[RMDB]
The record gives the reactivity of an RNA of 177 nucleotides to DMS and 2A3. The reactions ran in a buffer of 150 mM KOAc, 10 mM MgCl2 and 150 mM bicine (pH 8.5), at 24 C. 2A3 adducts were read by reverse transcription with SuperScript II with manganese.
RNA sequence: GGGAACGACUCGAGUAGAGUCGAAAAAAAAAAGAUAUGGAAGCUUCUCUAGCGUGACUGAUGACCACAUCUUAUGUCGGAAACGAUUAUCAUGUGCAAGGUUCGGGAGCUUCCUAAGUCAAAAAAACCUAUAAAUAAGGUUCGCCUUAUUUAUAGGAAAAGAAACAACAACAACAAC
Reactivity to DMS in 0.01 (KOAc 150mM, MgCl2 10mM, bicine 150mM(pH8.5), 24C), signal-to-noise 2, nucleotides 027 to 126: a000a050a050a060a060a090g010a030u010a190u010g010g000a010a010g020c010u000u000c020u010c050u000a120g060c100g010u000g010a020c070u010g000a080u010g000a060c300c000a010c020a010u000c100u000u010a040u000g020u000c010g020g010a030a020a090c020g020a010u000u000a030u000c120a010u000g040u000g000c060a110a060g000g000u000u000c070g020g000g000a010g010c010u000u000c000c000u000a010a060g010u010c000a000a000a070a080a050a090a120
Reactivity to 2A3 in 0.01 (KOAc 150mM, MgCl2 10mM, bicine 150mM(pH8.5), 24C), signal-to-noise 2, nucleotides 027 to 126: a000a020a040a020a020a080g020a000u060a000u060g000g030a000a010g000c050u220u110c120u150c110u140a060g110c100g280u210g030a020c060u040g060a220u100g030a180c000c000a010c000a010u000c070u200u140a160u300g070u010c000g030g000a030a000a000c010g000a010u040u070a050u300c100a010u030g020u010g000c050a100a300g090g000u060u010c040g010g000g030a010g000c000u000u000c000c020u000a000a020g000u000c030a050a020a020a040a140a020a070
The 2A3 profile rests on 1,837 reads.